[RMDB]
RNA sequence: GGGAACGACUCGAGUAGAGUCGAAAACAAUGAGUCUUCGGACUCAUUGAAAAAGCGUACUACUAGAGGUACCAGCUAAGACAGCCUCCCAAAUAGGAGGUCGAGCUGAGUACUACCCACCUAGUAUCGCAAAAAGCACUAUCUUCGGAUAGUGCAAUACAAAAGUACGGUUCGCCGUACUUUUGUAAAAAGAAACAACAACAACAAC
Reactivity to DMS in 0.01 (KOAc 150mM, MgCl2 10mM, bicine 150mM(pH8.5), 24C), signal-to-noise 3, nucleotides 027 to 156: c010a010a010u010g010a020g040u000c000u000u030c300g060g030a050c010u000c010a000u000u000g010a050a080a100a110a160g000c000g050u000a090c120u010a030c000u000a030g020a270g030g000u000a010c000c000a040g000c000u000a130a120g000a150c300a140g000c000c000u000c000c000c030a050a120a270u010a100g000g010a010g000g010u000c060g010a070g010c010u000g000a280g010u000a010c000u000a030c010c000c030a300c170c000u000a010g000u000a060u000c030g030c060a000a040a130a090a070g020c020a040c010u000a000u000c010u010u010c300g070g010a030u000a000g040u010g000c000a030a030
Reactivity to 2A3 in 0.01 (KOAc 150mM, MgCl2 10mM, bicine 150mM(pH8.5), 24C), signal-to-noise 4, nucleotides 027 to 156: c010a000a000u000g000a000g020u030c030u050u150c300g060g000a000c000u000c000a000u000u000g030a080a000a000a010a010g020c030g020u070a060c030u000a000c000u010a030g000a020g040g000u000a020c000c000a000g020c010u100a220a020g080a110c030a060g030c010c000u030c000c020c020a150a300a130u260a080g010g000a000g000g020u090c020g050a010g000c000u010g020a020g100u000a010c000u020a010c010c020c010a060c000c010u000a000g010u010a030u300c020g000c040a010a050a090a010a020g000c010a000c000u000a010u000c010u020u140c270g100g000a000u010a000g000u010g010c000a000a000
The record gives the reactivity of an RNA of 207 nucleotides to DMS and 2A3. The RNA was probed in 150 mM KOAc, 10 mM MgCl2 and 150 mM bicine (pH 8.5) at 24 C. 2A3 adducts were read by reverse transcription with SuperScript II with manganese.